[RMDB]
RNA sequence: GGGAACGACUCGAGUAGAGUCGAAAAGUAAACAGCUUGAGUAGAGUGUGAGCCGCUGCGAUACCAGCUCGAUUACGAGCCCUUGGCAGCGCGUCGGAAGGACGGGUCCCUGAAUAUAAAAAAGUAAACAUCAGUUAAGAUUCGUCUUAACUGAUGUAAAAGAAACAACAACAACAAC
Reactivity to DMS in 0.01 (KOAc 150mM, MgCl2 10mM, bicine 150mM(pH8.5), 24C), signal-to-noise 8, nucleotides 027 to 126: g010u010a060a130a090c070a060g010c010u000u000g010a120g010u010a100g010a060g010u000g010u010g000a180g010c030c020g020c020u000g010c010g010a080u010a080c130c200a220g000c010u000c000g020a270u000u010a100c060g000a020g010c010c070c080u000u000g000g010c020a010g010c010g010c050g010u000c040g000g020a100a080g010g010a050c040g000g000g000u000c010c010c010u010g000a080a060u020a080u020a000a040a060a080a050a080g010u010a060a080
Reactivity to 2A3 in 0.01 (KOAc 150mM, MgCl2 10mM, bicine 150mM(pH8.5), 24C), signal-to-noise 5, nucleotides 027 to 126: g040u070a030a090a040c020a040g080c010u070u070g050a040g080u190a030g070a030g030u050g020u020g050a020g030c020c010g000c020u010g010c010g060a050u060a100c070c000a000g000c010u010c020g110a180u170u290a130c050g000a000g000c010c020c000u020u020g070g000c020a000g000c000g000c010g020u020c020g030g110a120a070g100g010a020c020g000g010g020u020c000c000c010u020g080a110a020u180a010u180a100a130a010a010a020a000g110u140a140a150
Overview:
Chemical mapping of a 177-nucleotide RNA with DMS and 2A3. For DMS the reverse transcriptase was MarathonRT. The DMS profile rests on 11,182 reads. The RNA was probed in 150 mM KOAc, 10 mM MgCl2 and 150 mM bicine (pH 8.5) at 24 C. Reactivities are given for positions 27 through 126.